The record gives the reactivity of an RNA of 177 nucleotides to 2A3 and DMS. The DMS profile rests on 2,540 reads. For DMS the reverse transcriptase was MarathonRT. The 2A3 profile rests on 3,907 reads. 2A3 adducts were read by reverse transcription with SuperScript II with manganese. The RNA was probed in 150 mM KOAc, 10 mM MgCl2 and 150 mM bicine (pH 8.5) at 24 C.
RNA sequence: GGGAACGACUCGAGUAGAGUCGAAAACACCAUAUACGAUGUUAAAGUUACGUGAGGCUACAAAUGAAUAUAUCGGUGCUAACUUAGAUCCUAGUCAUUUAUGGUGGCAAGGUAUUGAUCCAAUUGCCCCAUAAUCCUCGUUCGCGAGGAUUAUGGGAAAAGAAACAACAACAACAAC
Reactivity to 2A3 in 0.01 (KOAc 150mM, MgCl2 10mM, bicine 150mM(pH8.5), 24C), signal-to-noise 6, nucleotides 027 to 126: c010a010c010c000a000u050a020u010a060c060g060a050u090g050u110u140a150a070a070g030u050u090a120c130g070u160g070a110g090g020c020u060a030c070a030a180a090u240g070a170a010u090a010u020a050u100c080g050g040u060g010c040u020a050a100c030u040u080a040g030a110u030c010c020u050a040g020u040c030a050u030u090u150a140u160g100g020u040g020g020c010a010a030g030g000u090a080u070u150g050a050u040c010c000a010a100u080u120g090c000
Reactivity to DMS in 0.01 (KOAc 150mM, MgCl2 10mM, bicine 150mM(pH8.5), 24C), signal-to-noise 2, nucleotides 027 to 126: c080a050c050c000a050u010a040u000a060c130g000a210u000g010u000u020a050a150a070g010u000u000a040c140g010u050g000a110g000g040c040u020a110c110a020a060a020u000g020a200a100u000a060u000a030u000c060g040g000u010g000c040u030a020a110c170u010u040a060g000a050u000c020c020u020a070g000u030c150a050u000u020u010a050u020g020g050u020g010g000c060a050a040g000g000u060a100u010u040g010a080u050c060c010a060a140u000u040g020c060